The data come from the RNA Mapping Database (RMDB), library OK2TST. An RNA of 177 nucleotides, treated with DMS and 2A3 and read out base by base. DMS adducts were read by reverse transcription with MarathonRT. The RNA was probed in 150 mM KOAc, 10 mM MgCl2 and 150 mM bicine (pH 8.5) at 24 C.
[RMDB]
RNA sequence: GGGAACGACUCGAGUAGAGUCGAAAACAAUCUGUCCAGCCCUGCAUACAUCGGCCUACCCACUAGUGGGGCGUUCAAGCUAGAAUACAGAGUUGGUCCGGCGCUUAAUUUGUCGCCGCAAUUGAUCCUAGAGUAACCCAUUCGUGGGUUACUCUAGAAAAGAAACAACAACAACAAC
Reactivity to DMS in 0.01 (KOAc 150mM, MgCl2 10mM, bicine 150mM(pH8.5), 24C), signal-to-noise 3, nucleotides 027 to 126: c100a110a100u000c070u000g010u000c030c020a050g000c010c020c010u000g030c050a060u000a040c190a080u000c020g000g010c020c030u010a170c020c010c020a050c070u010a110g010u010g000g000g000g050c180g030u020u000c140a070a140g000c030u000a070g010a070a050u010a050c030a060g000a030g000u000u000g000g010u000c110c000g010g010c010g010c010u000u000a070a160u010u020u000g010u000c000g000c000c000g000c120a060a050u000u010g000a140u000c100
Reactivity to 2A3 in 0.01 (KOAc 150mM, MgCl2 10mM, bicine 150mM(pH8.5), 24C), signal-to-noise 2, nucleotides 027 to 126: c020a000a090u020c040u100g050u030c000c000a020g020c030c000c000u000g010c010a020u030a090c010a070u030c000g030g000c000c010u080a070c040c010c000a030c010u030a040g130u090g070g040g000g060c060g010u130u190c040a010a020g010c000u060a020g030a040a040u060a040c000a030g030a000g020u010u030g000g010u000c030c040g040g030c000g030c020u140u190a200a160u300u300u110g130u200c010g000c020c000g010c000a030a040u050u100g020a070u090c000